[RMDB]
RNA sequence: GGGAACGACUCGAGUAGAGUCGAAAACAGUGUCUUUCCACCUGGACGUUGUGAAGCCGCUGGAGGCUAAAGCUUACGUGCAGGUGGUGCUGAGUUGGCAAGACAGCGCGGGGCGCACAUUGCGGCGUCCUCAGGUCGAUUUCGAUCGACCUGAGGAAAAAGAAACAACAACAACAAC
Reactivity to DMS in 0.01 (KOAc 150mM, MgCl2 10mM, bicine 150mM(pH8.5), 24C), signal-to-noise 2, nucleotides 027 to 126: c080a110g000u000g010u010c030u000u000u010c010c000a010c000c000u000g020g000a020c000g020u000u000g020u000g000a300a090g010c030c020g020c260u020g020g000a180g000g020c010u010a040a100a170g000c010u000u000a020c010g030u000g000c010a030g010g030u000g000g020u000g000c030u000g010a120g030u000u020g000g010c070a140a050g000a050c030a050g020c100g000c100g000g000g010g040c000g010c010a040c030a180u000u000g010c120g000g010c030g010
Reactivity to 2A3 in 0.01 (KOAc 150mM, MgCl2 10mM, bicine 150mM(pH8.5), 24C), signal-to-noise 1, nucleotides 027 to 126: c020a120g060u030g070u100c060u080u210u030c010c010a010c010c010u020g040g160a010c010g000u030u000g040u010g070a050a010g000c010c040g000c300u300g250g120a200g010g000c000u040a190a000a000g000c030u100u210a020c000g010u010g260c000a000g000g010u000g000g000u000g030c010u010g000a270g030u220u140g070g000c000a040a020g070a000c020a030g040c000g000c040g080g020g000g010c010g000c010a000c010a070u130u270g090c250g120g020c000g010
Source: RMDB library OK2TRN, as collected in RNAgym. The record gives the reactivity of an RNA of 177 nucleotides to DMS and 2A3. 2A3 is a SHAPE reagent: it acylates the 2'-hydroxyl of flexible nucleotides of all four kinds. Values are in units of 0.01, from 0 to 300, in steps of 10. For DMS the reverse transcriptase was MarathonRT. High DMS reactivity at an A or C suggests that its Watson-Crick edge is free. The reactions ran in a buffer of 150 mM KOAc, 10 mM MgCl2 and 150 mM bicine (pH 8.5), at 24 C.